[RMDB]
RNA sequence: GGGAACGACUCGAGUAGAGUCGAAAACAGCUACGUUUCGACGUAGCUGAAAAUAAAACAGGCAAGUACCAGCCUGAAAAAGGUACAAAGAACGAAAGAUCAAAACGGUUCGAUUCGUCGAACCGAACGAGAGAAUGAAGUUCGCUUCAUUCUCUCGAAAAGAAACAACAACAACAAC
Reactivity to 2A3 in 0.01 (KOAc 150mM, MgCl2 10mM, bicine 150mM(pH8.5), 24C), signal-to-noise 4, nucleotides 027 to 126: c000a000g010c000u020a000c000g020u000u060u170c220g070a020c000g000u000a000g000c000u000g000a000a010a000a000u100a000a060a010a020c090a010g000g000c010a060a150g000u000a010c000c000a010g010c000c000u000g070a080a000a000a010a000g000g000u000a010c000a010a090a020g060a090a000c110g050a160a040a050g060a070u150c090a020a050a040a060c020g000g010u000u010c000g000a000u030u040c190g030u000c000g050a000a000c000c000g010a010a000
Reactivity to DMS in 0.01 (KOAc 150mM, MgCl2 10mM, bicine 150mM(pH8.5), 24C), signal-to-noise 3, nucleotides 027 to 126: c000a000g010c000u000a000c010g000u010u000u020c160g010a020c020g010u010a010g000c000u000g000a010a060a040a130u000a090a030a100a170c210a020g000g030c000a040a130g010u000a000c010c020a080g000c010c010u000g010a010a010a010a060a030g060g030u000a020c020a080a090a090g010a040a110c110g010a040a090a060g010a070u000c110a080a070a100a100c010g000g000u000u000c000g020a030u000u030c150g030u000c000g010a000a000c000c000g010a010a030